[RMDB]
RNA sequence: GGGAACGACUCGAGUAGAGUCGAAAACAUAUCGAUGACCGGCACCCGCGGUUCGGGCGCGGUCAUGGGGUGCUCCGCGGGCCAACCGGACCGUGCAGGAAGUCAUCGAAUCCGGCAUCGCGCUCCAGUGUAUUAGUAUGUUCGCAUACUAAUACACAAAAGAAACAACAACAACAAC
Reactivity to 2A3 in 0.01 (KOAc 150mM, MgCl2 10mM, bicine 150mM(pH8.5), 24C), signal-to-noise 7, nucleotides 027 to 126: c020a040u210a070u150c010g010a010u010g020a030c020c020g110g050c060a050c010c000c010g010c010g020g000u000u020c010g010g060g060c020g000c010g010g020u030c010a010u060g000g000g000g010u030g000c010u010c020c000g000c000g000g020g090c070c030a040a030c020c000g010g000a000c000c000g000u020g010c010a010g010g040a080a010g020u010c010a010u010c010g000a010a030u030c020c000g060g040c070a130u120c050g000c010g000c020u020c010c010a020
Reactivity to DMS in 0.01 (KOAc 150mM, MgCl2 10mM, bicine 150mM(pH8.5), 24C), signal-to-noise 9, nucleotides 027 to 126: c180a130u010a100u000c010g010a020u000g000a020c000c070g020g030c190a090c010c030c070g010c050g010g000u000u000c020g010g010g010c010g010c000g000g010u000c070a030u000g000g000g010g020u000g010c070u000c010c000g010c020g000g010g010c110c220a150a090c030c020g010g000a010c010c000g010u000g000c150a130g000g010a200a080g000u000c010a010u000c010g000a030a080u000c040c030g010g020c100a100u010c140g010c030g010c020u000c010c050a140